[RMDB]
RNA sequence: GGGAACGACUCGAGUAGAGUCGAAAAGUGCAAACAGACCGAAAAUAAGUAAUAAUGUAGAAGAUUUGGGCAACACAACUAACCAUUGGUAUAUUCUAGAACACUUCAUCAAAAAAGUCCAGAAUGUACACUAUUUUCUAGUGCACAUGGAACAUUAACCCUAAAAUCGAUUCGUCGAUUUUAGGGUAAAAGAAACAACAACAACAAC
Reactivity to 2A3 in 0.01 (KOAc 150mM, MgCl2 10mM, bicine 150mM(pH8.5), 24C), signal-to-noise 2, nucleotides 027 to 156: g010u000g000c010a020a070a080c030a110g070a050c040c050g030a020a060a010a090u120a110a000g050u040a010a160u040a100a060u080g030u060a050g050a140a000g020a090u060u100u120g000g030g020c030a100a000c030a050c020a090a110c010u050a050a050c030c040a020u030u060g020g000u060a060u020a030u110u000c010u040a050g040a130a010c010a040c070u090u080c030a130u090c090a070a100a130a110a090a000g010u000c000c000a010g040a060a030u020g000u000a010c010a000c020u000a050u030u100u030u030c040u050a020g010u020g000c020a010c010a030u070g040g000a030a010c020a030u160u180a070
Reactivity to DMS in 0.01 (KOAc 150mM, MgCl2 10mM, bicine 150mM(pH8.5), 24C), signal-to-noise 2, nucleotides 027 to 156: g000u000g010c000a060a100a110c020a080g000a110c060c010g030a080a060a110a170u020a080a160g000u000a120a130u000a070a070u050g000u010a140g050a130a140g010a140u000u010u010g010g010g000c050a090a040c080a050c030a040a100c030u000a080a080c030c030a260u010u000g010g030u010a110u000a060u000u000c050u010a100g010a060a070c030a080c030u000u010c060a120u010c070a010a040a060a060a040a080g000u000c020c000a100g020a100a020u000g030u000a010c010a040c010u000a060u000u000u010u000c250u010a050g050u000g020c000a010c010a080u000g000g010a060a030c020a120u010u010a110
The record gives the reactivity of an RNA of 207 nucleotides to 2A3 and DMS. For DMS the reverse transcriptase was MarathonRT. 2A3 adducts were read by reverse transcription with SuperScript II with manganese. For 2A3, 1,208 sequencing reads were counted. For DMS, 2,089 sequencing reads were counted.